[RMDB]
RNA sequence: GGGAACGACUCGAGUAGAGUCGAAAAACAGGCCAAUCCUGUAGGUAAUAUGAGAGUCACAAACCAUGAUCUAAACCAGAAAAUUGAAGAAGCAAGGCUGAACGUUAAACACACCGAAAAUUGGCUGAUGUUAGCGUCUUUUCGAAGACGCUAACAUAAAAGAAACAACAACAACAAC
Reactivity to 2A3 in 0.01 (KOAc 150mM, MgCl2 10mM, bicine 150mM(pH8.5), 24C), signal-to-noise 1, nucleotides 027 to 126: a000c000a020g020g000c000c000a010a030u040c000c010u050g010u040a040g030g000u050a020a070u070a150u110g170a180g010a010g030u000c010a030c030a140a100a000c030c010a060u070g020a000u030c030u100a020a040a210c020c030a040g090a110a090a030a060u130u050g090a140a040g050a070a000g060c060a060a030g050g000c010u060g030a030a000c020g000u010u030a050a170a010c040a000c030a010c080c000g080a020a040a000a080u080u030g000g040c040u090g010
Reactivity to DMS in 0.01 (KOAc 150mM, MgCl2 10mM, bicine 150mM(pH8.5), 24C), signal-to-noise 1, nucleotides 027 to 126: a040c030a080g000g020c050c140a100a030u010c040c080u000g010u030a130g000g000u000a070a070u020a050u000g020a170g000a090g000u010c020a100c070a080a080a060c060c070a050u010g000a090u000c060u000a020a100a090c090c050a080g000a070a020a100a170u020u000g000a060a040g020a110a070g000c070a020a080g000g010c020u000g010a030a060c080g000u010u010a040a020a030c120a080c170a020c060c060g020a010a060a050a100u000u010g020g000c050u000g020